[RMDB]
RNA sequence: GGGAACGACUCGAGUAGAGUCGAAAAGAAACGGCUUAUGAGUAAGGCCUUUCCGGUUCUUGCAGCGUUUCCUUCCGUAUGGUUGGUAAAGCUGCGAGGGUUCGCCGGAAAGGGUUCAUAAGCCUAAGGUUCGCUGAGUUUUCGAACUCAGCGAACCAAAAGAAACAACAACAACAAC
Reactivity to 2A3 in 0.01 (KOAc 150mM, MgCl2 10mM, bicine 150mM(pH8.5), 24C), signal-to-noise 3, nucleotides 027 to 126: g170a020a080a010c110g000g000c010u010u000a000u030g020a000g020u020a100a040g300g300c000c000u010u000u000c010c000g000g000u050u010c000u000u000g010c000a030g020c030g080u050u300u020c000c000u000u000c030c020g240u300a220u300g000g000u000u040g000g000u150a110a050a000g010c000u000g000c000g000a000g010g020g000u160u110c030g000c010c000g040g000a000a000a000g010g000g000u000u000c000a000u010a000a000g000c000c000u000a010a000